[RMDB]
RNA sequence: GGGAACGACUCGAGUAGAGUCGAAAACUAAAAUGUAAGCCUGUAUUUAAGCAGUAUAAGCAAUACUUAAAUAUAUUACUGCCCUUAGAUCAAAGCUAUAUGCAUUAGUACCUCUAUGUUCUGGAGUAGAAUCAGACGAAUUCGUUCGUCUGAUUCUAAAAGAAACAACAACAACAAC
Reactivity to 2A3 in 0.01 (KOAc 150mM, MgCl2 10mM, bicine 150mM(pH8.5), 24C), signal-to-noise 4, nucleotides 027 to 126: c010u070a020a040a000a130u090g010u060a080a000g010c010c010u020g100u160a010u010u020u000a010a010g010c010a000g040u010a050u040a130a000g090c080a140a100u050a190c030u110u160a040a140a000u180a070u030a050u040u090a000c010u000g000c030c010c020u000u020a000g030a010u020c050a070a060a000g000c000u030a040u020a020u300g000c020a010u000u070a000g050u050a060c020c000u000c030u070a100u120g070u050u020c020u020g010g050a050g050u050
Reactivity to DMS in 0.01 (KOAc 150mM, MgCl2 10mM, bicine 150mM(pH8.5), 24C), signal-to-noise 1, nucleotides 027 to 126: c000u000a010a030a050a010u010g000u030a270a030g000c000c000u000g120u050a000u000u000u060a000a030g000c080a000g000u000a140u000a020a090g030c100a300a060u000a120c220u000u050a000a000a140u030a070u000a110u000u000a020c030u000g040c000c300c030u000u010a080g000a000u000c110a190a300a060g000c000u030a080u000a190u040g000c190a000u000u000a030g000u000a000c200c000u000c020u060a000u030g000u000u000c030u000g000g100a090g030u000
This 177-nucleotide RNA was probed chemically with 2A3 and DMS.
For 2A3 the reverse transcriptase was SuperScript II with manganese.
It was measured as part of the RMDB libraries RFM100 and RFMREP.
DMS adducts were read by reverse transcription with MarathonRT.
The reactions ran in a buffer of 150 mM KOAc, 10 mM MgCl2 and 150 mM bicine (pH 8.5), at 24 C.